RNA sequence: GGGAACGACUCGAGUAGAGUCGAAAAGCAAGAUGAGUUAGAAUAUUAUCUUUGCCAUUGUGUGGCUCAGGAAAUGGAGGCUUCUAACCUCUCUUUUGAUUAACUAAUUUUAUCCAGAGUUAAUAAGUGGUGGUACUGGUAUGUGAACCAGUGUGUACAAGGCGGAUCAAUUCGUUGAUCCGCCUUGAAAAGAAACAACAACAACAAC
Reactivity to 2A3 in 0.01 (KOAc 150mM, MgCl2 10mM, bicine 150mM(pH8.5), 24C), signal-to-noise 1, nucleotides 027 to 156: g040c010a010a010g030a000u100g070a010g240u100u220a000g100a100a110u050a050u160u090a120u000c000u040u150u210g050c000c020a080u150u080g080u030g000u010g070g000c020u000c000a000g000g070a000a020a020u200g030g020a000g040g010c030u140u000c010u120a030a030c000c000u000c000u100c030u000u090u110u110g050a000u030u050a050a050c010u030a080a080u070u010u300u070a120u000c030c000a080g020a000g070u060u070a090a040u100a270a050g020u070g020g020u000g000g000u050a040c000u000g040g050u070a120u120g210u070g050a000a010c000c040a000g010u050g000u010g000u000a010
Chemical mapping of a 207-nucleotide RNA with 2A3. Source: RMDB library OK3TST, as collected in RNAgym. Conditions: 150 mM KOAc, 10 mM MgCl2 and 150 mM bicine (pH 8.5), 24 C.